Chemical mapping of a 207-nucleotide RNA with 2A3.
The reactions ran in a buffer of 150 mM KOAc, 10 mM MgCl2 and 150 mM bicine (pH 8.5), at 24 C.
It was measured as part of the RMDB library OK3TST.
RNA sequence: GGGAACGACUCGAGUAGAGUCGAAAAACGGCGACUGGCGAUGGUCGUGCGACACGCAGUCGCUCGAGUUCGACACCGAGUAGGGGACUUUUACGGGGCUGGAAUGAGCCGGAACGUGCGGCAUUCGUUGGCCGCUGGCGGACAACCGCGGCGCGCGCGCUGGUACUAUUUUCGAAUAGUACCAGCGAAAAGAAACAACAACAACAAC
Reactivity to 2A3 in 0.01 (KOAc 150mM, MgCl2 10mM, bicine 150mM(pH8.5), 24C), signal-to-noise 1, nucleotides 027 to 156: a000c020g000g020c030g000a010c020u080g190g050c030g240a300u200g130g030u070c080g110u240g130c300g010a000c000a000c050g000c000a000g010u000c010g000c010u000c010g000a020g020u040u000c000g000a020c000a000c070c010g000a020g000u050a080g070g020g000g020a030c040u130u070u140u180a080c110g000g010g010g070c080u060g080g070a150a130u130g010a090g000c000c000g000g030a100a010c010g050u120g030c040g000g000c020a010u010u140c100g020u110u040g070g000c020c010g000c000u100g200g010c000g000g030a050c010a140a090c010c030g000c000g020g000c020g000c030g000c000g020